Conditions: 150 mM KOAc, 10 mM MgCl2 and 150 mM bicine (pH 8.5), 24 C.
An RNA of 177 nucleotides, treated with 2A3 and DMS and read out base by base.
Source: RMDB library OK1LIB, as collected in RNAgym.
For DMS, 1,749 sequencing reads were counted.

RNA sequence: GGGAACGACUCGAGUAGAGUCGAAAACUACAUUAAUGUUGAACCUUAUCUACAAGGAGGCAUCAUGCCCAUCAAUGUCAACAAUCCCGAAGCGGAUGCGCUGACGCGGAAGUUCGCGCAUAUAGCUGAUGCCCAUAUACUUCGGUAUAUGGGCAUCAAAAGAAACAACAACAACAAC
Reactivity to 2A3 in 0.01 (KOAc 150mM, MgCl2 10mM, bicine 150mM(pH8.5), 24C), signal-to-noise 6, nucleotides 027 to 126: c020u130a020c020a080u100u210a150a020u110g020u030u080g080a070a050c000c000u040u040a100u140c100u110a080c090a140a010g030g010a040g040g000c010a040u100c050a060u300g020c000c000c000a040u110c050a020a060u070g020u030c030a030a020c020a010a130u030c000c020c010g020a050a010g020c030g020g030a010u020g000c000g000c040u090g000a000c020g030c140g220g130a090a060g020u040u020c020g000c000g030c050a000u080a020u030a030g020c050u020
Reactivity to DMS in 0.01 (KOAc 150mM, MgCl2 10mM, bicine 150mM(pH8.5), 24C), signal-to-noise 2, nucleotides 027 to 126: c190u050a110c100a060u000u020a000a070u030g000u000u010g010a130a130c010c040u000u000a050u070c290u060a100c120a050a000g010g000a100g000g030c000a060u000c150a050u040g000c000c030c020a140u000c100a010a000u000g000u010c070a160a030c140a080a090u010c000c000c000g010a080a080g000c000g000g090a050u000g000c000g010c000u050g030a070c020g000c300g010g000a160a040g030u000u000c300g060c000g050c010a010u000a080u030a050g020c000u000